Structure probing data (DMS and 2A3) for a 207-nucleotide construct. High DMS reactivity at an A or C suggests that its Watson-Crick edge is free.
[RMDB]
RNA sequence: GGGAACGACUCGAGUAGAGUCGAAAACACAAUUCUCUAAGCGAUGAGAAGCGUGUGGAAAAUUAGGGAAGGGCUACGCCUAUAAUCCUAAGAAAGCUUAUCUACAAGCGGAGGUAUUCUCAGAACGAAAACCAUUUGGCGUUCGCGCCAAAUGGAACAGUGUACAUUUGUUCGCAAAUGUACACUGAAAAGAAACAACAACAACAAC
Reactivity to DMS in 0.01 (KOAc 150mM, MgCl2 10mM, bicine 150mM(pH8.5), 24C), signal-to-noise 3, nucleotides 027 to 156: c000a070c050a050a180u010u030c010u010c000u000a180a200g030c100g020a290u010g000a010g000a020a050g000c290g000u000g020u010g000g010a060a040a090a140u000u000a030g010g040g020a220a150g000g010g010c030u000a090c230g020c020c020u000a090u010a070a150u000c010c000u000a030a080g000a080a090a120g010c030u010u010a080u000c060u000a130c050a060a060g030c020g010g000a080g020g020u000a140u000u010c030u000c020a140g020a080a100c070g000a090a090a090a170c010c000a030u010u000u000g000g030c000g000u000u000c300g030c010g000c010c030a000a010a000u000g010g010a040a050
Reactivity to 2A3 in 0.01 (KOAc 150mM, MgCl2 10mM, bicine 150mM(pH8.5), 24C), signal-to-noise 7, nucleotides 027 to 156: c030a000c020a030a060u050u010c010u000c010u070a180a120g150c070g130a110u110g010a050g000a030a020g020c050g010u050g010u100g030g020a080a090a020a060u040u020a010g010g000g020a060a050g050g010g000c060u210a050c170g020c000c010u010a030u060a090a060u060c000c010u010a020a010g060a050a080a000g020c010u060u050a060u140c050u110a100c060a130a030g030c030g050g020a020g040g070u070a110u140u020c050u000c030a040g040a110a050c060g060a070a050a040a080c000c000a000u000u000u000g000g000c000g020u040u050c190g000c010g000c070c000a000a000a000u000g000g000a000a000
The reactions ran in a buffer of 150 mM KOAc, 10 mM MgCl2 and 150 mM bicine (pH 8.5), at 24 C. Values cover nucleotides 27 to 156. DMS adducts were read by reverse transcription with MarathonRT.